[RMDB]
RNA sequence: GGGAACGACUCGAGUAGAGUCGAAAAUGUAACAACUCACCUGCCGAAUCAACUAGCCCCGAAAAUGGAUGGCGCUGAAGCGCGCGACCCACACCCGGCCAUCUGGGCGAACGCCAUGCCCCGAUGAAAAUAAUCAGUCAUUCGUGACUGAUUAUUUAAAAGAAACAACAACAACAAC
Reactivity to 2A3 in 0.01 (KOAc 150mM, MgCl2 10mM, bicine 150mM(pH8.5), 24C), signal-to-noise 8, nucleotides 027 to 126: u160g030u080a100a030c020a030a040c030u020c030a050c000c000u020g010c020c010g040a040a090u090c020a040a080c030u060a040g010c000c000c000c010g080a110a070a020a030u100g030g030a040u050g040g000c020g000c040u080g060a110a040g020c020g000c000g010c010g070a060c000c010c010a020c000a010c020c010c000g020g000c010c000a030u010c010u010g010g030g000c010g030a080a030c050g030c040c010a040u100g010c000c000c000c010g020a020u100g030a040
Reactivity to DMS in 0.01 (KOAc 150mM, MgCl2 10mM, bicine 150mM(pH8.5), 24C), signal-to-noise 8, nucleotides 027 to 126: u040g010u020a090a110c100a080a100c060u010c040a050c040c010u000g000c030c020g000a100a080u010c090a080a090c090u010a120g010c020c000c020c040g010a050a040a090a090u020g010g000a070u010g000g000c020g010c020u000g020a090a120g000c090g010c060g000c030g000a060c030c010c010a070c110a100c040c030c020g010g020c080c020a030u000c030u000g000g000g000c010g010a050a070c080g010c050c060a060u010g010c020c000c000c060g000a060u020g000a090